[RMDB]
RNA sequence: GGGAACGACUCGAGUAGAGUCGAAAAGCACAAUGGGAGGAAGCCUGAUGCAGCGACGCAGCGUGAGGGAUGAAGGCCUUCGGGUUGUAAACCUCUUUCAGCAGGGACGAUGCGUGAGUGCCGGUACAAUAAUAUAGAAAUUCGUUUCUAUAUUAUUAAAAGAAACAACAACAACAAC
Reactivity to DMS in 0.01 (KOAc 150mM, MgCl2 10mM, bicine 150mM(pH8.5), 24C), signal-to-noise 1, nucleotides 027 to 126: g000c070a040c060a090a060u060g000g000g000a060g030g010a100a080g030c040c050u000g000a300u070g000c010a270g000c220g000a300c000g000c220a230g000c110g000u030g000a040g000g000g040a000u070g010a210a270g010g000c000c020u010u020c090g020g000g010u000u000g000u000a000a300a150c000c020u000c010u000u020u030c100a080g000c030a050g000g020g030a040c080g000a030u010g010c010g000u000g000a080g020u010g000c050c040g010g020u020a030c070
Reactivity to 2A3 in 0.01 (KOAc 150mM, MgCl2 10mM, bicine 150mM(pH8.5), 24C), signal-to-noise 2, nucleotides 027 to 126: g040c010a010c000a000a070u070g010g000g010a010g020g020a020a010g020c000c030u050g030a040u150g000c090a080g010c000g140a060c070g000c070a040g020c050g080u060g000a000g010g020g000a010u250g020a050a000g000g000c020c000u030u010c090g060g020g000u030u000g000u010a010a000a000c010c000u000c000u000u080u030c000a030g000c000a030g020g000g030a010c000g010a010u020g000c010g010u040g020a020g020u040g030c010c000g030g000u050a010c010
The record gives the reactivity of an RNA of 177 nucleotides to DMS and 2A3. 2A3 adducts were read by reverse transcription with SuperScript II with manganese. It was measured as part of the RMDB library OK1LIB. 2A3 is a SHAPE reagent: it acylates the 2'-hydroxyl of flexible nucleotides of all four kinds.